[RMDB]
RNA sequence: GGGAACGACUCGAGUAGAGUCGAAAAAUGGUGGCUGACACCUGUAGUCGUAGCACUCCAUGGCACUGAAUUUACGGUGGAAGGAUCACAUUGGCAAGUCAAAUCCUUGGGCUACAGGAAAGACUCCCAUGUGCUGCUUUUAUGCUCCCCAGCAGCAUCAUACGUAGUGGUUCGCCACUACGUAUGAAAAAGAAACAACAACAACAAC
Reactivity to DMS in 0.01 (KOAc 150mM, MgCl2 10mM, bicine 150mM(pH8.5), 24C), signal-to-noise 2, nucleotides 027 to 156: a060u000g020g020u000g000g030c040u000g010a120c100a160c010c010u010g010u000a040g000u010c020g020u000a100g040c050a120c050u010c020c020a090u000g030g040c030a130c060u000g000a080a090u010u000u000a100c040g030g020u010g010g000a080a080g000g000a020u000c050a050c070a130u000u000g000g000c050a080a130g010u000c020a040a080a110u000c050c020u010u000g030g040g010c030u000a030c020a060g030g010a050a070a150g000a050c040u010c080c000c030a100u000g020u000g000c000u000g010c000u000u020u000u000a070u010g000c030u000c100c030c030c100a090g000c010a040g030c030a200
Reactivity to 2A3 in 0.01 (KOAc 150mM, MgCl2 10mM, bicine 150mM(pH8.5), 24C), signal-to-noise 5, nucleotides 027 to 156: a000u020g000g010u020g010g020c010u020g000a040c020a020c080c000u020g000u000a010g000u000c080g080u100a030g040c040a030c100u000c010c070a090u130g060g000c040a030c070u070g060a160a170u110u220u250a160c090g010g000u020g010g060a070a070g030g010a040u090c040a040c030a200u100u150g070g000c070a080a060g010u150c040a110a080a090u050c010c000u010u040g060g010g000c000u010a020c010a010g000g060a040a030a010g030a030c020u020c050c020c000a030u060g050u050g020c000u000g000c000u010u070u050u110a180u300g080c040u090c000c020c000c000a000g020c010a000g000c000a020